[RMDB]
RNA sequence: GGGAACGACUCGAGUAGAGUCGAAAAGUAAUAGAUAACUGGAUGCAGCGUAGGCGUCAACGCAUAUCCAGUACGAAUGGUACCUGUAAAUAAAAUAUGGCGCCUAGUACAAGUACCAACAGAAGGCUAAGCGAUGGUGAUGUCAAUCACAUUUGCAUCCUCCUCCGAUGUUCGCAUCGGAGGAGGAAAAAGAAACAACAACAACAAC
Reactivity to 2A3 in 0.01 (KOAc 150mM, MgCl2 10mM, bicine 150mM(pH8.5), 24C), signal-to-noise 1, nucleotides 027 to 156: g000u010a010a050u080a180g050a040u040a060a300c000u000g000g010a050u060g080c130a110g000c140g010u010a040g030g000c020g000u000c000a010a010c010g000c000a000u060a000u130c000c000a000g010u010a010c040g100a120a060u080g030g000u000a000c000c000u000g000u040a000a150a070u110a040a140a080a020u130a050u060g000g000c050g000c000c000u000a000g010u000a020c000a010a000g000u020a010c000c000a000a030c010a010g180a110a000g030g000c020u010a010a080g010c030g010a020u060g050g010u010g060a000u060g180u240c040a140a080u010c000a030c000a000u040u030u130g000c010a040